This 207-nucleotide RNA was probed chemically with 2A3. Source: RMDB library RSTRND, as collected in RNAgym. Conditions: 150 mM KOAc, 10 mM MgCl2 and 150 mM bicine (pH 8.5), 24 C. Reactivities are rounded to 0.1 and cut off at 0 and 3.
[RMDB]
RNA sequence: GGGAACGACUCGAGUAGAGUCGAAAACUUCACGCCAUGGGAAAGGUCCACAGACUAAGUGGAAGUGGGUUGAACGAUCGUUCAGCUUAAGAUAUAGUCGGGCCCUGAUUGAAAGAUCUGGGGAGUCACUGUUCCGUAGGUGAACCUGCGGAAGGAUCAGCUUCCAAUGGUUCGCCAUUGGAAGCUGAAAAGAAACAACAACAACAAC
Reactivity to 2A3 in 0.01 (KOAc 150mM, MgCl2 10mM, bicine 150mM(pH8.5), 24C), signal-to-noise 1, nucleotides 027 to 156: c030u110u080c020a070c080g040c040c000a150u050g000g000g120a020a020a000g000g040u000c030c010a050c070a100g050a050c030u030a090a000g050u050g050g020a040a080g070u100g040g030g010u000u000g020a040a040c050g100a230u120c100g000u000u020c000a000g020c000u000u050a030a030g010a020u110a050u050a160g030u000c000g010g100g080c000c000c000u050g000a030u000u060g050a140a150a000g020a050u010c050u060g000g010g140g000a060g040u070c080a000c150u060g110u130u000c000c070g000u050a000g060g000u100g200a180a220c000c000u020g000c020g000g000a020a020g020g000a010u000